[RMDB]
RNA sequence: GGGAACGACUCGAGUAGAGUCGAAAAAACACCAUUACCAAUUUCAUAACGACAACAUAUGGAAUGGCUGUUACCCUUGGCAUACCUGAGGCCGAUUGGCCCCGAUUGGUAAGGGACCUUACUGAUGGCCUGCUGAUUCCUUCGGGAAUCAGCAGGCAAAAGAAACAACAACAACAAC
Reactivity to 2A3 in 0.01 (KOAc 150mM, MgCl2 10mM, bicine 150mM(pH8.5), 24C), signal-to-noise 2, nucleotides 027 to 126: a000a000c070a000c020c020a000u000u070a300c000c000a000a020u000u050u200c150a110u070a250a000c020g160a040c000a120a020c080a170u050a120u240g000g010a050a000u000g010g040c250u040g020u000u070a010c000c000c000u000u020g000g000c130a000u070a130c040c000u070g130a180g010g130c000c090g300a300u100u300g040g000c000c000c000c000g060a000u050u000g140g010u140a000a150g000g000g040a090c000c030u080u120a020c160u140g160a170u240g030

Chemical mapping of a 177-nucleotide RNA with 2A3.